The record gives the reactivity of an RNA of 177 nucleotides to DMS and 2A3. For DMS, 2,203 sequencing reads were counted. 2A3 adducts were read by reverse transcription with SuperScript II with manganese. The reactions ran in a buffer of 150 mM KOAc, 10 mM MgCl2 and 150 mM bicine (pH 8.5), at 24 C.
[RMDB]
RNA sequence: GGGAACGACUCGAGUAGAGUCGAAAAGAUAUGGAAACGUAAGGGCGAAGAACUACACGUAAUCGGAAACGAUGAAGUGUAGGGAGCCUAUCGUUUCCUAAGUCAAAGUCUGAGUUCGCUCAGACAACCUAGACAGUCUGUUCGCAGACUGUCUAGGAAAAGAAACAACAACAACAAC
Reactivity to DMS in 0.01 (KOAc 150mM, MgCl2 10mM, bicine 150mM(pH8.5), 24C), signal-to-noise 3, nucleotides 027 to 126: g000a030u000a300u010g000g000a030a000a010c000g050u000a130a300g000g030g010c020g020a110a120g010a080a120c010u000a000c000a000c020g000u000a300a090u000c030g000g000a010a030a120c000g020a000u000g000a100a300g010u000g000u000a000g000g000g010a040g000c000c010u000a180u010c000g030u010u000u000c000c000u000a000a060g000u000c040a100a050a170g000u000c000u000g010a010g010u000u020c300g010c000u000c010a010g000a030c000a070a060
Reactivity to 2A3 in 0.01 (KOAc 150mM, MgCl2 10mM, bicine 150mM(pH8.5), 24C), signal-to-noise 3, nucleotides 027 to 126: g000a000u080a010u080g010g000a030a000a000c020g050u100a230a300g070g000g000c050g160a300a030g000a070a030c000u010a000c010a000c020g060u120a010a040u010c020g030g010a060a050a000c020g010a000u030g120a110a020g000u000g010u000a000g000g000g000a000g000c010c000u010a040u050c000g000u010u000u000c000c000u000a050a010g050u020c040a170a040a020g000u000c010u010g000a000g010u110u200c270g070c130u020c010a000g000a000c000a000a010